[RMDB]
Chemical mapping of a 207-nucleotide RNA with 2A3. It was measured as part of the RMDB library M2RFOK. For 2A3, 713 sequencing reads were counted.

RNA sequence: GGGAACGACUCGAGUAGAGUCGAAAAAGUCAGAGGGCGCUACCAUGCAAACUAGGGCUGGCUACUCUUGCACAGAAGCACAUCUCGAUAAUUGUCAGUGCAAGAAGGACAAUUAUACCAUUUAAUGAAAACGUUUACCUGUUCGCAGGUAAACGAACAGACUAUGCGUCUUCGGACGCAUAGUCUGAAAAGAAACAACAACAACAAC
Reactivity to 2A3 in 0.01 (KOAc 150mM, MgCl2 10mM, bicine 150mM(pH8.5), 24C), signal-to-noise 2, nucleotides 027 to 156: a000g050u050c020a030g000a000g070g040g000c020g000c040u080a220c170c030a100u220g000c050a040a030a060c070u080a040g080g000g040c040u010g020g000c000u140a130c030u090c000u010u000g000c010a000c020a010g070a140a010g010c030a030c040a240u070c030u040c120g090a040u020a020a010u000u010g010u020c000a000g000u000g000c000a020a020g000a010a000g000g000a000c000a010a000u040u000a060u060a080c060c010a140u180u220u230a140a100u170g070a030a080a000a000c000g000u010u010u010a000c000c000u000g010u020u050c200g000c110a000g000g000u010a000a000a000c000g000a030a030